[RMDB]
RNA sequence: GGGAACGACUCGAGUAGAGUCGAAAAUCGAACAACUGGGUGGGUCGGGGUUCGUCGAACUGGACCAGGUGCGGGCCGCGGCGGCCCGAACGGGUCAUCCGUGGUGGACGUUGAGCCAAUUGUCCGAAUGAGACUUUUAGUUCGCUAAAAGUCUCAUAAAAGAAACAACAACAACAAC
Reactivity to 2A3 in 0.01 (KOAc 150mM, MgCl2 10mM, bicine 150mM(pH8.5), 24C), signal-to-noise 1, nucleotides 027 to 126: u040c000g000a010a030c020a020a030c070u160g040g040g040u200g030g190g120u220c150g010g020g060g040u070u090c030g000u020c040g030a070a050c070u140g030g000a060c020c010a040g020g060u120g020c050g010g020g060c030c010g020c070g120g010c020g000g010c030c000c030g010a020a000c000g000g000g000u040c010a120u130c000c050g020u040g050g020u030g000g030a080c080g020u070u220g060a030g020c000c040a040a110u170u150g040u010c010c000g020a040
Reactivity to DMS in 0.01 (KOAc 150mM, MgCl2 10mM, bicine 150mM(pH8.5), 24C), signal-to-noise 2, nucleotides 027 to 126: u010c040g000a090a060c050a100a110c140u010g000g000g020u000g000g020g000u010c100g000g000g010g010u000u000c030g000u020c070g010a060a030c150u010g030g020a050c030c070a090g010g030u000g000c000g000g020g000c010c030g010c100g010g030c300g020g000c010c000c000g020a020a020c060g020g000g000u000c010a030u000c030c020g020u000g010g010u010g000g000a010c060g000u000u010g010a140g000c020c010a060a130u010u000g010u000c040c000g000a100

The record gives the reactivity of an RNA of 177 nucleotides to 2A3 and DMS. For DMS the reverse transcriptase was MarathonRT. It was measured as part of the RMDB library OK2TRN. For 2A3, 863 sequencing reads were counted. The reactions ran in a buffer of 150 mM KOAc, 10 mM MgCl2 and 150 mM bicine (pH 8.5), at 24 C.